[RMDB]
RNA sequence: GGGAACGACUCGAGUAGAGUCGAAAACACUGGUGGGCAGAUCCCUGAUAUGGCCCACACUUGAUUUGACUAUGUAUUGGCUGCCAAGAUACUUGUUGAUAGUUUUGGCUUUUGCCGGGGACUCCACGUAAGAAGACAGAUUCGUCUGUCUUCUUACAAAAGAAACAACAACAACAAC
Reactivity to DMS in 0.01 (KOAc 150mM, MgCl2 10mM, bicine 150mM(pH8.5), 24C), signal-to-noise 9, nucleotides 027 to 126: c140a120c130u000g020g030u000g000g000g020c020a150g000a140u000c010c030c030u000g010a140u010a090u010g010g010c010c000c010a020c030a070c120u000u000g000a110u000u000u000g010a070c060u000a060u000g020u010a090u000u000g020g010c020u000g000c020c020a040a060g010a060u000a030c050u000u000g010u000u010g010a110u000a080g000u000u000u000u000g000g010c020u000u000u000u000g020c010c000g010g010g010g010a140c070u000c030c040a090c240
Reactivity to 2A3 in 0.01 (KOAc 150mM, MgCl2 10mM, bicine 150mM(pH8.5), 24C), signal-to-noise 5, nucleotides 027 to 126: c070a010c100u150g090g000u010g000g000g050c020a020g000a180u070c020c020c000u030g060a080u040a070u230g120g020c020c020c010a010c020a010c000u030u130g070a050u100u050u130g040a030c040u060a100u230g060u070a140u150u160g030g020c010u050g010c020c010a020a030g040a100u110a110c020u070u170g090u160u150g200a100u090a110g030u040u020u020u040g010g020c000u050u090u080u140g040c000c000g000g000g030g000a010c010u020c050c020a030c060